Structure probing data (2A3 and DMS) for a 177-nucleotide construct. For DMS, 12,618 sequencing reads were counted. It was measured as part of the RMDB library OK2TST. For 2A3 the reverse transcriptase was SuperScript II with manganese. For 2A3, 4,535 sequencing reads were counted.
RNA sequence: GGGAACGACUCGAGUAGAGUCGAAAACAAGAAUCAGGGUUAUGGAGUUAUAUCUUUGACAGCUCCUUAAAACCAAGCCAUGAUGGUAAACAAACUCCUGUCACUGAUAACAUGGGCUUUAGUGUUAUAAUAGUAGUUCUUUCGAGAACUACUAUUAAAAAGAAACAACAACAACAAC
Reactivity to 2A3 in 0.01 (KOAc 150mM, MgCl2 10mM, bicine 150mM(pH8.5), 24C), signal-to-noise 4, nucleotides 027 to 126: c010a010a070g090a100a070u100c020a030g070g020g030u090u110a070u150g010g010a000g010u020u040a110u020a040u190c090u100u100u080g090a060c060a030g000c000u000c000c000u020u050a060a110a010a040c010c000a020a000g030c010c010a050u090g010a030u050g020g080u110a120a090a040c050a020a130a020c020u040c030c000u030g030u070c030a010c070u060g020a060u050a070a010c020a050u050g020g090g060c010u090u090u130a070g010u090g040u140u130a110
Reactivity to DMS in 0.01 (KOAc 150mM, MgCl2 10mM, bicine 150mM(pH8.5), 24C), signal-to-noise 9, nucleotides 027 to 126: c080a110a110g010a130a070u000c040a030g000g000g010u000u010a050u010g010g010a030g020u000u000a110u000a080u010c060u010u010u010g010a080c220a060g000c020u000c020c010u000u010a050a060a110a100c140c170a070a090g010c030c030a070u010g000a080u000g000g010u000a040a080a110c150a060a060a070c060u000c020c020u000g000u000c050a050c050u000g000a050u010a050a090c090a040u000g000g010g010c090u000u000u000a080g010u000g000u000u000a120